The data come from the RNA Mapping Database (RMDB), library OK3TST. Structure probing data (DMS and 2A3) for a 207-nucleotide construct. The RNA was probed in 150 mM KOAc, 10 mM MgCl2 and 150 mM bicine (pH 8.5) at 24 C.

RNA sequence: GGGAACGACUCGAGUAGAGUCGAAAAUGAAGCCUGAAAUAGAUUUGUAAUUACUUCACUAAUCAUCACAUUUUUCUAAAGCUGAUGGAACAACAGCAUGUAACUCUUUUGCUUUACUUUGUACUGGACCAGGCUCUCAGUGUUAAAUUUUUGGAAAAUUAAUGACCUAUUUCGAUAGGUCAUUAAUAAAAGAAACAACAACAACAAC
Reactivity to DMS in 0.01 (KOAc 150mM, MgCl2 10mM, bicine 150mM(pH8.5), 24C), signal-to-noise 1, nucleotides 027 to 156: u020g050a060a100g010c040c030u010g010a040a080a130u000a180g020a110u000u000u020g010u010a090a080u000u000a040c060u000u020c030a060c040u000a080a170u010c050a120u010c050a050c070a120u010u000u020u000u040c060u010a130a040a120g000c030u010g020a130u020g010g000a060a070c020a070a060c010a050g000c020a080u020g010u000a090a040c050u000c120u000u000u000u020g010c080u000u000u000a040c030u000u000u010g030u000a120c030u010g010g010a150c050c020a120g050g010c010u000c030u000c030a050g010u010g000u000u010a040a120a150u010u000u000u000u030g000g000a140a110a100
Reactivity to 2A3 in 0.01 (KOAc 150mM, MgCl2 10mM, bicine 150mM(pH8.5), 24C), signal-to-noise 2, nucleotides 027 to 156: u130g010a050a020g030c010c010u030g110a000a060a020u130a040g050a020u040u050u150g040u060a100a070u110u080a090c060u120u090c070a020c100u100a090a030u040c030a010u120c010a010c010a110u160u140u080u170u100c040u240a130a110a070g000c020u000g020a050u020g030g080a030a010c040a030a030c010a050g010c010a000u080g040u090a070a070c030u020c030u030u150u130u110g000c010u010u030u090a070c020u110u180u140g050u020a060c020u030g010g010a020c010c060a010g010g000c030u040c010u010c030a020g020u030g060u080u110a080a150a240u110u160u100u110u050g070g030a070a120a150